[RMDB]
RNA sequence: GGGAACGACUCGAGUAGAGUCGAAAAGCCGACUGCACGUGCGUGCGAGCAGUUUUCGAAAUCGCACGUAUCACGUAAAGACCCAACUCUACUCGAUGCGAGGGUCAGCAAGCAAGCAGCAAUAAAAAGUUAUAAUUGCAUUCGUGCAAUUAUAACUAAAAGAAACAACAACAACAAC
Reactivity to 2A3 in 0.01 (KOAc 150mM, MgCl2 10mM, bicine 150mM(pH8.5), 24C), signal-to-noise 6, nucleotides 027 to 126: g040c020c030g090a080c040u040g010c020a000c030g010u010g000c000g010u010g000c000g010a060g050c100a060g030u070u080u140u250c070g080a080a080a100u010c010g000c010a000c000g000u010a060u090c030a010c030g020u030a010a060a050g040a020c010c000c020a020a030c000u000c000u000a010c010u000c010g030a040u090g010c030g030a080g000g010g000u010c010a020g010c010a020a030g020c000a040a010g000c020a000g000c030a040a030u140a140a110a030a010
Reactivity to DMS in 0.01 (KOAc 150mM, MgCl2 10mM, bicine 150mM(pH8.5), 24C), signal-to-noise 7, nucleotides 027 to 126: g010c040c040g010a120c060u000g010c130a050c050g020u000g010c020g010u000g010c000g010a010g020c170a130g010u000u010u000u010c160g000a060a120a100u000c010g000c010a010c010g010u000a080u010c050a030c050g020u000a050a090a090g010a050c020c050c020a100a060c010u000c000u000a010c010u000c000g000a020u010g010c040g000a100g010g010g000u000c020a040g000c040a050a070g010c050a050a060g010c040a050g010c070a060a070u010a060a060a070a070
This 177-nucleotide RNA was probed chemically with 2A3 and DMS.
The DMS profile rests on 9,880 reads.
DMS adducts were read by reverse transcription with MarathonRT.
For 2A3 the reverse transcriptase was SuperScript II with manganese.